Notes: This 207-nucleotide RNA was probed chemically with 2A3 and DMS. The reactions ran in a buffer of 150 mM KOAc, 10 mM MgCl2 and 150 mM bicine (pH 8.5), at 24 C. It was measured as part of the RMDB library OK3TST. Values cover nucleotides 27 to 156.
RNA sequence: GGGAACGACUCGAGUAGAGUCGAAAACUCACCGCCGUCUACGUGCCGAACAUGACGCCGAACCGGGUGCACCGGUCGAGCCCCAUGGGCCGGUCGGACUACAGCGCGCCGAUUCACGACCAGUUCGCCGCGCUCGACGACACAUGGUCGAGCUGGACUAAUUCUAGCCUUUCGAGGCUAGAAUUAGAAAAGAAACAACAACAACAAC
Reactivity to 2A3 in 0.01 (KOAc 150mM, MgCl2 10mM, bicine 150mM(pH8.5), 24C), signal-to-noise 1, nucleotides 027 to 156: c010u010c010a050c010c020g070c010c010g030u000c040u070a040c020g020u040g030c040c000g000a020a010c070a190u090g050a020c020g050c100c160g010a020a020c010c000g020g000g030u070g010c020a030c020c000g010g000u000c000g010a070g020c020c000c010c070a210u300g000g000g000c000c000g000g010u000c000g000g040a070c080u190a080c190a070g000c000g030c070g110c050c010g010a010u030u020c040a020c020g040a090c070c010a000g000u000u010c010g000c050c000g020c010g020c060u040c030g020a010c020g040a020c030a010c020a210u150g070g000u070c090g010a040g000c020u030g000g020a000
Reactivity to DMS in 0.01 (KOAc 150mM, MgCl2 10mM, bicine 150mM(pH8.5), 24C), signal-to-noise 1, nucleotides 027 to 156: c050u020c040a160c080c050g010c000c000g030u020c010u020a010c010g000u000g040c100c030g010a020a200c050a090u010g020a090c080g070c030c030g040a030a060c020c010g000g010g070u010g040c050a300c000c010g020g010u000c010g010a150g030c010c070c010c160a060u000g070g020g010c000c030g000g040u000c010g010g020a140c080u000a100c050a080g040c050g050c030g010c020c010g020a080u010u000c030a190c030g010a040c010c000a090g010u000u000c010g000c000c020g000c030g050c140u000c050g040a080c020g000a100c000a090c050a060u020g030g020u000c020g020a100g020c020u010g010g000a300
The 2A3 profile rests on 2,803 reads. Values are in units of 0.01, from 0 to 300, in steps of 10.